The record gives the reactivity of an RNA of 177 nucleotides to 2A3 and DMS. Reactivities are rounded to 0.1 and cut off at 0 and 3. For DMS the reverse transcriptase was MarathonRT. The DMS profile rests on 2,967 reads.
RNA sequence: GGGAACGACUCGAGUAGAGUCGAAAAGAUAUGGAGUAUACGGAGGAACUACUCGAAUAAGUCGGAAACGACUUAUACGAGCUUAAGUAUACUCCUAAGUCAAAAGUAAGGCCUUCGGGCCUUACAACUAACCAUAAACCUUCGGGUUUAUGGUUAGAAAAGAAACAACAACAACAAC
Reactivity to 2A3 in 0.01 (KOAc 150mM, MgCl2 10mM, bicine 150mM(pH8.5), 24C), signal-to-noise 1, nucleotides 027 to 126: g020a000u050a000u080g000g000a000g000u010a010u000a000c000g040g080a030g060g000a180a250c200u230a060c000u290c000g010a000a010u000a000a000g000u000c010g000g000a000a030a030c000g000a000c010u000u000a010u000a010c000g000a000g030c020u030u020a030a000g000u010a000u000a000c000u010c000c000u000a000a010g000u000c030a000a070a100a020g000u000a000a000g000g000c000c020u040u160c300g070g020g020c000c000u000u020a000c000a000a000
Reactivity to DMS in 0.01 (KOAc 150mM, MgCl2 10mM, bicine 150mM(pH8.5), 24C), signal-to-noise 3, nucleotides 027 to 126: g000a050u000a300u000g000g000a010g030u000a010u000a010c010g010g020a110g010g010a080a060c160u010a300c010u000c000g010a140a020u000a000a000g000u010c000g020g000a090a090a110c000g010a020c000u000u000a000u000a040c000g000a020g020c040u000u000a120a150g010u000a000u000a010c000u000c000c000u000a020a050g000u010c030a100a080a100a080g010u000a000a000g000g020c000c010u000u010c280g020g000g000c010c010u000u000a000c010a070a130